Source: RMDB library OK2TRN, as collected in RNAgym. Chemical mapping of a 177-nucleotide RNA with DMS.
RNA sequence: GGGAACGACUCGAGUAGAGUCGAAAAUGUGGUGGUGCAUGCCUGUAAUCCCAGCUACUCGGGCGGCUGAGGCAGACGAAUCACUUGAACCUGGGAGGCAGAGGUUGCGGUGAGCCAAGAUCGCACCUCUAUGACGACACUUCGGUGUCGUCAUAGAAAAAGAAACAACAACAACAAC
Reactivity to DMS in 0.01 (KOAc 150mM, MgCl2 10mM, bicine 150mM(pH8.5), 24C), signal-to-noise 2, nucleotides 027 to 126: u000g050u000g010g020u000g000g020u010g010c050a060u000g020c030c000u000g020u010a060a160u010c010c030c010a070g020c050u010a040c030u010c140g010g020g000c070g000g010c070u000g010a080g000g030c030a010g010a090c080g000a130a120u010c020a040c010u000u000g000a070a070c070c010u010g010g000g010a070g010g000c100a060g000a020g010g010u000u000g030c030g010g010u000g000a070g020c020c080a030a100g010a040u000c070g010c030a100c040c030